Structure probing data (DMS and 2A3) for a 177-nucleotide construct. The 2A3 profile rests on 770 reads.
[RMDB]
RNA sequence: GGGAACGACUCGAGUAGAGUCGAAAACCUGUCCUUGCUCAAGUGCUGGGAUUGUGUGCCAACGGCUAUGAUAGAUAUGAAUAGAGCACGAGAUAAUGUGCUUACAGAAAGUUGGUUGAAUUGAAUGCAAGUGUUACAUCUUCGGAUGUAACACUUGAAAAGAAACAACAACAACAAC
Reactivity to DMS in 0.01 (KOAc 150mM, MgCl2 10mM, bicine 150mM(pH8.5), 24C), signal-to-noise 3, nucleotides 027 to 126: c010c000u010g030u010c010c010u000u000g000c010u000c180a130a130g020u000g050c030u000g000g000g010a030u010u030g010u000g010u020g000c010c000a030a030c020g050g010c070u010a070u000g020a200u000a040g020a070u010a090u000g010a120a140u010a120g000a040g010c010a000c010g000a080g010a110u010a100a100u030g010u010g000c000u000u000a080c170a100g010a040a050a110g000u000u000g010g020u020u000g000a050a150u010u010g020a100a170u020g010
Reactivity to 2A3 in 0.01 (KOAc 150mM, MgCl2 10mM, bicine 150mM(pH8.5), 24C), signal-to-noise 2, nucleotides 027 to 126: c000c000u000g020u060c000c000u000u030g000c010u050c140a260a070g120u030g130c000u010g010g010g010a050u100u120g160u120g040u150g050c000c000a020a000c030g000g030c060u050a060u110g120a080u070a130g050a000u070a040u280g140a100a050u070a200g050a050g040c010a000c010g050a090g060a140u190a030a050u140g010u010g010c030u030u000a000c020a010g160a030a170a010g060u040u020g000g000u000u120g010a080a110u110u090g070a050a010u140g060